RNA sequence: GGGAACGACUCGAGUAGAGUCGAAAAGGGGUCACAGCUUGGAUUUAUGUGAGUAACAAGAGGCUUUGAUCUACAAUCUUUAUAUCUGAAGCCUCCACGGAUAUAAAGAUUGUAGGGAGCCUCCGCCCUCACAUUGUCAGCUGUGACGGAGGCACCCGAUAGAUUGAGACUUCGGUCUCAAUCUAUCAAAAGAAACAACAACAACAAC
Reactivity to 2A3 in 0.01 (KOAc 150mM, MgCl2 10mM, bicine 150mM(pH8.5), 24C), signal-to-noise 2, nucleotides 027 to 156: g020g000g030g000u010c010a010c020a010g010c020u170u250g200g020a080u290u300u060a050u110g010u010g010a020g030u120a180a210c300a300a140g020a010g000g000c000u300u270u060g020a010u000c010u010a000c000a000a010u010c000u000u010u000a000u000a000u000c010u010g050a180a020g020c000c000u000c000c000a010c000g000g000a000u010a000u000a000a010a000g000a000u000u010g000u000a000g000g000g000a000g000c000c000u020c010c010g070c000c010c000u000c000a000c000a000u020u090g030u020c010a000g000c000u010g000u010g000a000c010g000g000a000g000g010c010a020c000c010c000
The record gives the reactivity of an RNA of 207 nucleotides to 2A3.
Values cover nucleotides 27 to 156.
It was measured as part of the RMDB library RNAMAK.
Conditions: 150 mM KOAc, 10 mM MgCl2 and 150 mM bicine (pH 8.5), 24 C.